[RMDB]
RNA sequence: GGGAACGACUCGAGUAGAGUCGAAAAUUGUUGAUCAGUUCAGAGAUGUGUCACAAUGCCCAUGUAGGCAGAGCCUAGACAAAUGUUCCAUCGCCUGGGUGAUCAGUGCAGAGAUAUGUGACAAGGCAUGCGUCUGGACAUUCGUGUCCAGACGCAUAAAAGAAACAACAACAACAAC
Reactivity to DMS in 0.01 (KOAc 150mM, MgCl2 10mM, bicine 150mM(pH8.5), 24C), signal-to-noise 1, nucleotides 027 to 126: u000u020g030u000u000g000a060u000c040a090g000u020u000c090a120g020a270g020a040u000g010u020g000u000c040a040c070a070a090u000g000c000c010c090a120u010g020u010a020g010g040c060a080g000a160g010c020c040u000a060g000a050c110a040a120a110u000g000u010u010c020c010a110u010c010g030c070c000u010g000g010g000u000g000a070u000c010a040g040u010g040c030a090g010a090g010a060u000a020u000g020u010g000a080c140a060a070g000g030c160
This 177-nucleotide RNA was probed chemically with DMS. For DMS the reverse transcriptase was MarathonRT.